[RMDB]
RNA sequence: GGGAACGACUCGAGUAGAGUCGAAAAUCCAGCAACAGCAGGAGAUAACAAUGACUACACAGCGAGUCAAAGCCAACAGCAUAUUAAUCAAUAUGGUUAUCAAUCAAAUGUAGGUCCAGACGCGAGCAUCUCGGGCAAAGUUCGCUUUGCCCGAGAUAAAAGAAACAACAACAACAAC
Reactivity to DMS in 0.01 (KOAc 150mM, MgCl2 10mM, bicine 150mM(pH8.5), 24C), signal-to-noise 1, nucleotides 027 to 126: u000c000c000a090g000c120a150a060c130a090g000c000a000g000g000a050g000a000u010a030a030c160a080a110u000g000a110c000u000a000c000a090c050a210g000c050g000a000g010u000c000a100a040a180g000c050c000a080a070c220a000g020c150a080u000a120u000u040a230a080u040c120a040a000u040a010u000g000g000u000u010a060u070c140a140a090u070c010a020a040a030u040g000u030a010g040g100u030c050c000a020g000a070c140g000c050g000a010g000c040
Reactivity to 2A3 in 0.01 (KOAc 150mM, MgCl2 10mM, bicine 150mM(pH8.5), 24C), signal-to-noise 3, nucleotides 027 to 126: u000c000c000a000g050c020a000a200c000a040g050c010a010g030g070a070g020a090u110a080a020c030a100a120u110g030a020c010u100a040c100a000c010a060g120c080g040a000g000u000c000a040a020a020g090c010c000a040a030c110a100g000c010a030u060a060u170u110a090a080u170c120a070a040u030a040u140g120g000u100u030a020u110c080a170a080u050c050a090a110a090u110g070u090a010g050g050u000c000c000a020g040a110c020g010c000g060a010g000c020
Conditions: 150 mM KOAc, 10 mM MgCl2 and 150 mM bicine (pH 8.5), 24 C. Chemical mapping of a 177-nucleotide RNA with DMS and 2A3. For 2A3, 1,321 sequencing reads were counted. For DMS the reverse transcriptase was MarathonRT.